[RMDB]
RNA sequence: GGGAACGACUCGAGUAGAGUCGAAAAAGACCACCUAUACGGAGGUGGUCAAGUCACGUAGCUAGUACCAGGUUGCAAUACUAGAGCGUUAGUCCUGGGGCGUACGGUGGCAGUACGCUGCCACCGAUAAAACUUGAAUACUUCGGUAUUCAAGUAAACUACACCACGGUUUCGACCGUGGUGUAGUAAAAGAAACAACAACAACAAC
Reactivity to 2A3 in 0.01 (KOAc 150mM, MgCl2 10mM, bicine 150mM(pH8.5), 24C), signal-to-noise 1, nucleotides 027 to 156: a000g000a000c000c000a000c000c000u100a130u080a200c080g290g010a030g000g030u010g000g000u000c000a000a000g050u020c030a000c030g010u000a000g090c000u000a000g010u020a170c000c000a000g010g000u000u010g020c010a020a000u010a000c000u000a000g010a000g040c060g140u140u190a000g030u070c000c020u000g000g000g060g010c150g090u180a070c010g010g000u000g000g000c000a000g000u050a000c190g030c100u000g020c000c020a000c000c000g000a000u000a000a050a000a020c000u020u030g000a000a000u030a000c030u040u120c190g070g000u010a000u000u000c000a000a000g000u000a010a010
The record gives the reactivity of an RNA of 207 nucleotides to 2A3. The data come from the RNA Mapping Database (RMDB), library M2RFPK. The reactions ran in a buffer of 150 mM KOAc, 10 mM MgCl2 and 150 mM bicine (pH 8.5), at 24 C.